This 177-nucleotide RNA was probed chemically with DMS and 2A3. For 2A3 the reverse transcriptase was SuperScript II with manganese.

[RMDB]
RNA sequence: GGGAACGACUCGAGUAGAGUCGAAAACGGGGGUAGCGGUAGAGUCCGCCGUCGGGCCCCUGGAGAUAGUACCAUGUCUCGUCGGUCCGUACCACCGAGGAGCGGUGAAGGCGUACCUUGCCGCCGCACCCGCUAAAAGAUUCGUCUUUUAGCGGGUAAAAGAAACAACAACAACAAC
Reactivity to DMS in 0.01 (KOAc 150mM, MgCl2 10mM, bicine 150mM(pH8.5), 24C), signal-to-noise 7, nucleotides 027 to 126: c040g010g010g000g010g020u000a060g020c010g010g010u000a060g010a100g010u000c030c010g010c000c030g000u000c030g020g010g000c010c010c080c080u000g010g010a020g010a020u000a050g020u010a150c250c240a130u010g000u000c000u000c010g000u000c050g010g020u000c010c020g010u010a110c230c020a020c010c010g020a260g010g010a180g010c010g010g010u000g010a210a110g010g000c040g010u000a050c020c010u000u000g010c020c000g010c000c040g010c110
Reactivity to 2A3 in 0.01 (KOAc 150mM, MgCl2 10mM, bicine 150mM(pH8.5), 24C), signal-to-noise 4, nucleotides 027 to 126: c010g010g000g000g000g040u030a010g010c000g000g000u020a040g010a030g100u030c080c010g000c010c010g070u040c000g020g040g000c000c000c020c040u080g120g020a000g000a000u050a020g100u090a180c080c130a170u150g020u000c010u000c010g210u050c130g010g000u020c020c000g010u040a060c010c060a010c010c000g030a160g100g140a150g250c020g010g000u040g060a120a050g010g000c010g000u010a030c010c000u020u050g010c020c010g000c020c000g020c010

The data come from the RNA Mapping Database (RMDB), library OK2TRN.